Source information:
Structure probing data (DMS) for a 177-nucleotide construct. The reactions ran in a buffer of 150 mM KOAc, 10 mM MgCl2 and 150 mM bicine (pH 8.5), at 24 C.

RNA sequence: GGGAACGACUCGAGUAGAGUCGAAAAGAUAUGGAGCACGGGAGGCACUAUAUCGGAAACGAUAUGGUGCCGACGAUCGUGAACUACUCCUAAGUCAAAGUAUGAUGACCUUCGGGUCAUCAUACAAUCGCUCAUACUCGUUCGCGAGUAUGAGCGAAAAAGAAACAACAACAACAAC
Reactivity to DMS in 0.01 (KOAc 150mM, MgCl2 10mM, bicine 150mM(pH8.5), 24C), signal-to-noise 1, nucleotides 027 to 126: g000a040u010a300u000g020g030a010g000c010a060c020g000g030g000a100g030g030c000a000c030u000a000u030a000u000c000g000g020a140a070a220c010g010a000u020a000u000g000g000u000g000c010c000g000a000c100g040a070u000c000g010u000g000a050a070c080u000a300c020u000c010c000u000a070a130g060u030c020a070a150a190g020u000a000u000g000a010u000g000a030c000c000u000u000c250g030g000g000u000c000a000u010c030a000u010a000c000a040a080